[RMDB]
RNA sequence: GGGAACGACUCGAGUAGAGUCGAAAAUGAUGGUUCCGACAGUUUGUAUUUCUUAGAACGGGAAAGCCAAUUUGGCUUUAGUUUAUGAGAACUUUUAAAGCUCAUUCUCGCUUCGGAGUAGUCUGUCUCGAUUAAAUGCAUUCGUGCAUUUAAUCGAAAAAGAAACAACAACAACAAC
Reactivity to 2A3 in 0.01 (KOAc 150mM, MgCl2 10mM, bicine 150mM(pH8.5), 24C), signal-to-noise 7, nucleotides 027 to 126: u150g070a030u050g040g020u060u030c010c000g000a010c000a010g020u070u140u140g140u150a080u030u150u010c020u040u130a040g020a050a030c010g030g030g020a020a030a020g000c020c020a220a300u120u140u300g000g000c000u020u000u020a060g020u030u060u050a100u050g020a010g020a060a050c030u080u170u110u260a130a120a010g020c000u000c010a010u060u010c010u000c020g080c080u010u010c000g000g010a010g000u030a010g050u010c020u010g010u000c010
Reactivity to DMS in 0.01 (KOAc 150mM, MgCl2 10mM, bicine 150mM(pH8.5), 24C), signal-to-noise 5, nucleotides 027 to 126: u030g020a110u010g000g010u000u000c000c000g000a020c050a010g010u010u020u020g010u000a040u020u030u020c020u010u020a170g020a040a040c020g000g000g010a020a020a020g000c010c000a100a190u020u040u020g010g010c000u000u000u020a040g000u010u010u000a010u010g000a030g010a060a060c150u020u040u040u050a070a120a090g010c020u000c000a020u000u000c010u000c010g000c130u000u000c030g000g000a030g010u000a020g000u010c010u000g000u010c060
Source: RMDB library OK1LIB, as collected in RNAgym. Chemical mapping of a 177-nucleotide RNA with 2A3 and DMS. DMS adducts were read by reverse transcription with MarathonRT. 2A3 adducts were read by reverse transcription with SuperScript II with manganese. Reactivities are given for positions 27 through 126. Conditions: 150 mM KOAc, 10 mM MgCl2 and 150 mM bicine (pH 8.5), 24 C.